[RMDB]
RNA sequence: GGGAACGACUCGAGUAGAGUCGAAAAAUGUGUACUAGGCACAUGCACACACGUACUAGCGUACACGGUACGUCUCGCGGAUCGAUCUGUCAUGAUCAUGACUCGCGAUCCUAGAGUACUCAUGGUAAGAUGACUGCAUAUUCGUAUGCAGUCAUCUAAAAGAAACAACAACAACAAC
Reactivity to 2A3 in 0.01 (KOAc 150mM, MgCl2 10mM, bicine 150mM(pH8.5), 24C), signal-to-noise 3, nucleotides 027 to 126: a000u040g020u020g020u040a070c050u080a090g140g000c060a010c010a050u070g030c100a070c000a010c000a010c100g020u040a030c030u050a040g070c040g090u050a010c090a030c070g020g000u020a000c000g050u020c010u010c020g020c020g000g030a040u010c010g000a060u020c020u100g210u160c090a070u160g120a100u170c030a050u120g020a010c010u010c050g000c020g020a020u000c000c000u030a010g000a000g020u010a010c000u050c100a110u170g120g020u080a040
Reactivity to DMS in 0.01 (KOAc 150mM, MgCl2 10mM, bicine 150mM(pH8.5), 24C), signal-to-noise 5, nucleotides 027 to 126: a080u010g020u010g000u000a130c070u010a110g000g020c060a030c060a080u000g010c130a080c090a070c090a050c030g020u010a000c010u000a100g020c110g010u010a060c100a140c090g010g000u000a010c020g000u000c050u000c020g000c180g000g010a030u000c000g000a060u010c020u000g000u000c090a020u000g020a110u010c120a080u000g000a010c000u000c090g000c000g010a010u000c010c000u010a140g010a040g010u010a050c050u000c110a100u000g010g000u000a110